Source: RMDB library ARCHII, as collected in RNAgym. Structure probing data (DMS and 2A3) for a 207-nucleotide construct. For DMS the reverse transcriptase was MarathonRT. Reactivities are given for positions 27 through 156.
[RMDB]
RNA sequence: GGGAACGACUCGAGUAGAGUCGAAAAGGCAUGUCGAGGACCCGUCACCUCGUUAAUCAAUGGGAAAAUCGUAACUGCAAACGACGAUACGUUCGCACUGGCAGCCUAAGGGCCGCCGUCCUCUGCCUAGUUCACUGACGGGCUAGUGUCGCAAGACGCUAUUGACUCUCUUCGGAGAGUCAAUAGCAAAAGAAACAACAACAACAAC
Reactivity to DMS in 0.01 (KOAc 150mM, MgCl2 10mM, bicine 150mM(pH8.5), 24C), signal-to-noise 2, nucleotides 027 to 156: g000g030c050a120u010g030u030c010g020a030g020g020a050c020c020c010g010u000c040a100c010c100u010c040g020u000u000a040a130u000c040a070a040u000g000g020g000a110a080a080a090u000c080g060u000a050a090c030u000g000c020a060a070a060c060g030a060c010g010a160u000a100c040g010u000u000c040g030c020a040c120u030g000g020c000a020g000c090c020u000a120a170g050g020g040c020c020g050c050c010g010u000c020c000u030c060u000g010c010c010u000a100g000u000u000c060a120c080u020g030a030c030g000g010g020c030u000a070g020u010g000u000c030g030c060a140a110g020a170c100
Reactivity to 2A3 in 0.01 (KOAc 150mM, MgCl2 10mM, bicine 150mM(pH8.5), 24C), signal-to-noise 5, nucleotides 027 to 156: g060g030c050a060u120g040u160c000g000a000g000g010a020c000c000c000g000u010c010a020c010c000u020c020g060u030u060a050a030u070c060a020a060u070g020g050g010a040a040a010a080u120c080g030u070a070a090c060u130g040c080a070a060a050c050g060a020c030g030a050u050a110c040g060u010u060c050g020c040a010c060u030g010g000c010a000g010c030c020u090a120a200g080g000g000c010c010g000c000c010g040u030c010c020u060c020u010g000c010c000u030a040g040u080u110c090a080c180u070g030a020c050g000g010g000c000u030a020g000u030g050u100c040g000c060a030a020g040a030c040